Annotation:
Source: RMDB library OK2TST, as collected in RNAgym. Chemical mapping of a 177-nucleotide RNA with DMS and 2A3. For DMS, 724 sequencing reads were counted. The RNA was probed in 150 mM KOAc, 10 mM MgCl2 and 150 mM bicine (pH 8.5) at 24 C.
RNA sequence: GGGAACGACUCGAGUAGAGUCGAAAAGGUUCAAUGCAUCACAUCAGCUAACUGAGGUAGAAGACAUUCUUUCCACCUCUCAGGUCAGAAAAUUGAGGCUCAGGCUGGUGACUCUUCUGUCCAGAGACCCUAUCCGGGUAUUCGUACCCGGAUAGGGAAAAGAAACAACAACAACAAC
Reactivity to DMS in 0.01 (KOAc 150mM, MgCl2 10mM, bicine 150mM(pH8.5), 24C), signal-to-noise 1, nucleotides 027 to 126: g000g000u000u000c030a050a090u000g040c050a140u000c080a100c050a020u000c030a050g010c080u000a120a130c080u000g000a030g010g020u000a050g010a030a080g000a180c300a120u020u000c020u000u000u000c030c040a010c030c070u000c040u000c070a050g000g010u020c030a010g000a060a010a080a130u020u020g010a080g000g000c040u000c100a050g000g000c030u000g000g000u000g010a040c070u000c050u000u000c030u010g010u010c010c030a140g000a050g010a200
Reactivity to 2A3 in 0.01 (KOAc 150mM, MgCl2 10mM, bicine 150mM(pH8.5), 24C), signal-to-noise 1, nucleotides 027 to 126: g040g000u040u070c040a030a050u140g010c000a050u050c020a020c000a130u050c050a040g000c010u050a050a130c050u050g020a010g050g000u040a010g010a060a010g050a010c040a100u190u040c020u050u030u000c040c020a060c000c000u060c020u050c060a020g060g000u020c020a000g190a040a100a030a040u170u100g080a030g030g000c020u050c030a050g150g080c060u080g030g000u040g000a010c010u000c000u100u000c030u050g020u060c010c030a020g060a060g050a180